Conditions: 150 mM KOAc, 10 mM MgCl2 and 150 mM bicine (pH 8.5), 24 C. An RNA of 177 nucleotides, treated with DMS and 2A3 and read out base by base.
[RMDB]
RNA sequence: GGGAACGACUCGAGUAGAGUCGAAAAGAUAUGGAGAUAUCUCCCCACCGAACUACGAGAUGUAUUCGGAAACGAAUACGCUCGCGAGGAUAUCUCCUAAGUCAAAACGGGCAGUUCGCUGCCCGAACCAUCUCUUUAGCUUCGGCUAAAGAGAUGGAAAAGAAACAACAACAACAAC
Reactivity to DMS in 0.01 (KOAc 150mM, MgCl2 10mM, bicine 150mM(pH8.5), 24C), signal-to-noise 1, nucleotides 027 to 126: g010a020u000a100u020g000g000a000g010a010u000a000u020c010u010c080c030c010c150a300c110c140g000a040a090c170u010a250c020g000a010g000a050u010g020u000a020u000u000c000g010g000a040a050a150c000g000a020a000u000a010c000g000c040u000c020g000c170g000a110g000g020a020u000a010u000c010u000c000c000u000a040a140g010u000c050a090a040a080a170c030g000g000g060c000a000g000u000u010c280g030c000u000g000c000c000c000g000a010a070
Reactivity to 2A3 in 0.01 (KOAc 150mM, MgCl2 10mM, bicine 150mM(pH8.5), 24C), signal-to-noise 1, nucleotides 027 to 126: g020a020u050a040u110g020g000a000g000a000u040a010u060c120u140c000c120c010c000a160c110c060g100a250a160c120u220a080c240g040a010g140a300u090g020u000a000u000u000c000g040g000a020a000a020c020g020a000a000u000a010c010g000c050u000c000g300c070g060a010g000g080a000u010a010u020c010u030c000c010u010a030a000g070u050c070a000a000a120a140c010g000g000g060c020a000g000u050u080c160g090c160u020g010c000c000c000g000a000a010